[RMDB]
RNA sequence: GGGAACGACUCGAGUAGAGUCGAAAAGAAAUUGUCGUCCUCGGCGGACAGCAGGGCAUGGAUGAAGUCCUGCGGGAUGUCGGCGAAGCGGAUCGGCGUCCGGCGCAUCUCGCCGAACUCGGAGAUCGGUGUAUAGAGUAUUCGUACUCUAUACACCAAAAGAAACAACAACAACAAC
Reactivity to DMS in 0.01 (KOAc 150mM, MgCl2 10mM, bicine 150mM(pH8.5), 24C), signal-to-noise 9, nucleotides 027 to 126: g010a050a080a080u010u010g010u010c030g010u000c030c020u000c030g010g000c030g010g010a200c090a120g010c010a020g010g000g010c020a090u020g010g010a170u030g010a120a110g000u000c000c000u000g010c000g010g000g000a090u020g010u010c010g010g010c070g010a110a100g010c120g010g000a080u010c040g000g010c080g010u010c020c000g010g020c050g000c130a100u010c070u010c020g010c000c010g000a030a050c060u010c060g010g000a120g000a090u020c120
Reactivity to 2A3 in 0.01 (KOAc 150mM, MgCl2 10mM, bicine 150mM(pH8.5), 24C), signal-to-noise 9, nucleotides 027 to 126: g060a000a090a020u170u110g050u040c030g020u010c000c010u020c020g040g000c020g020g020a030c020a030g000c000a000g010g020g000c040a050u180g100g150a130u160g140a150a030g010u010c000c000u000g000c000g000g000g000a030u050g030u030c000g010g030c030g040a100a020g080c080g080g060a160u070c040g030g010c020g030u030c020c000g040g000c040g000c030a070u020c060u050c040g000c000c000g010a040a040c030u030c060g060g020a050g020a080u140c090
Structure probing data (DMS and 2A3) for a 177-nucleotide construct. The RNA was probed in 150 mM KOAc, 10 mM MgCl2 and 150 mM bicine (pH 8.5) at 24 C. For DMS the reverse transcriptase was MarathonRT.